[RMDB]
RNA sequence: GGGAACGACUCGAGUAGAGUCGAAAAUGAGAUCCUGCCUCGAAACAAACUAACAAAAAUAUCAGCCAUGCAUGGUGGCAUGCAUCUGUAGUCUCAGCUACUUGGGAGGCUGAGGUGGGAGGAUCGCAGCAGAUCAGUUGUUCGCAACUGAUCUGCUAAAAGAAACAACAACAACAAC
Reactivity to 2A3 in 0.01 (KOAc 150mM, MgCl2 10mM, bicine 150mM(pH8.5), 24C), signal-to-noise 2, nucleotides 027 to 126: u060g020a020g010a000u010c000c000u070g200c010c000u030c030g100a150a160a060c050a080a080a060c060u210a040a040c090a080a100a060a040a010u140a030u090c010a010g000c030c020a020u000g040c010a000u030g060g040u060g240g080c000a000u000g000c000a030u070c000u130g130u090a060g020u000c020u000c060a050g000c020u120a060c000u060u040g020g030g030a070g000g000c000u020g000a000g030g050u060g000g000g020a010g010g000a000u000c030g020c010
Reactivity to DMS in 0.01 (KOAc 150mM, MgCl2 10mM, bicine 150mM(pH8.5), 24C), signal-to-noise 2, nucleotides 027 to 126: u010g020a100g000a010u000c000c000u000g000c020c000u010c060g000a110a110a130c200a060a150a190c180u020a050a100c230a010a090a090a050a110u030a040u000c010a010g000c100c060a090u000g000c000a020u010g020g000u020g020g000c010a000u000g000c020a010u000c070u050g020u000a050g010u000c060u000c050a020g020c240u000a070c100u000u010g020g000g010a130g010g000c000u000g000a010g010g010u030g000g020g000a050g000g000a000u010c030g030c130